[RMDB]
RNA sequence: GGGAACGACUCGAGUAGAGUCGAAAACGGGACUGCAUUUCCUCUCGCACUAUUUGGAAUGAAAUCCGUAGCAAGAUCUACUCUGCUGAUGGAUCUGAGAAUGAAAAGAUCAUAGAGUUUAUUGAUCGCUUAUUUUCUGAGGUUGGAUUAACCGGUGACAGUGUAAAGAGUUCGCUCUUUACACUGUAAAAGAAACAACAACAACAAC
Reactivity to DMS in 0.01 (KOAc 150mM, MgCl2 10mM, bicine 150mM(pH8.5), 24C), signal-to-noise 5, nucleotides 027 to 156: c050g020g040g020a090c030u000g010c050a130u000u000u000c010c030u010c060u010c090g000c090a110c070u000a070u000u000u000g040g010a060a070u000g010a080a100a120u000c010c010g030u000a090g020c050a100a130g010a070u000c020u000a060c030u000c010u000g000c050u000g010a110u000g010g010a070u000c030u000g010a080g010a050a080u010g000a060a080a110a110g010a030u000c010a050u010a130g010a250g020u000u010u000a070u020u000g010a040u000c010g000c180u000u000a080u000u000u010u000c010u000g000a090g020g020u000u000g010g000a130u000u000a080a060c040c000g020g020u000g000
Reactivity to 2A3 in 0.01 (KOAc 150mM, MgCl2 10mM, bicine 150mM(pH8.5), 24C), signal-to-noise 7, nucleotides 027 to 156: c030g010g010g080a040c050u070g010c060a040u070u070u050c010c020u030c040u050c050g090c030a070c070u150a150u210u110u120g020g030a080a040u050g000a100a090a030u040c010c020g020u030a010g050c070a140a040g000a030u000c010u050a030c030u010c030u050g050c040u040g040a080u090g080g040a010u000c010u050g050a060g040a090a070u120g040a050a070a040a060g020a010u010c020a010u090a040g130a030g070u120u240u190a100u080u110g010a010u010c020g000c030u070u070a080u090u110u020u020c030u060g040a040g040g030u040u050g030g020a090u120u150a070a050c020c040g000g010u040g060